The record gives the reactivity of an RNA of 207 nucleotides to 2A3. The RNA was probed in 150 mM KOAc, 10 mM MgCl2 and 150 mM bicine (pH 8.5) at 24 C. The 2A3 profile rests on 651 reads. Reactivities are given for positions 27 through 156. It was measured as part of the RMDB library OK3TST. Reactivities are rounded to 0.1 and cut off at 0 and 3.
RNA sequence: GGGAACGACUCGAGUAGAGUCGAAAAUCAAAGAUUUUAUCGUCCUCUAUAGAGUGGAUGAGCGAUGUCACACUAGUUUUACAGAGGGGACAUUUGUUAUUUAAUCCUACCCACCUACUGAGACAGGAAUAGCAAAAUUUAUGCAAACAUGGCAUGGGGUCAACUAUAGGUUCGCCUAUAGUUGACCAAAAGAAACAACAACAACAAC
Reactivity to 2A3 in 0.01 (KOAc 150mM, MgCl2 10mM, bicine 150mM(pH8.5), 24C), signal-to-noise 2, nucleotides 027 to 156: u100c030a050a130a070g050a040u010u070u140u150a090u110c010g050u070c030c010u000c010u020a050u040a090g160a010g020u030g030g000a030u020g030a030g070c020g070a070u070g030u090c000a010c030a000c130u090a070g170u040u150u160u220a070c100a050g020a090g070g100g020g000a000c010a020u050u060u080g050u010u030a130u030u100u170a150a020u050c000c000u000a030c000c000c000a030c020c010u020a100c040u080g030a050g020a000c000a010g020g080a060a010u040a010g000c000a000a000a050a000u160u270u090a070u020g010c000a020a120a090c020a090u090g050g000c000a000u090g070g010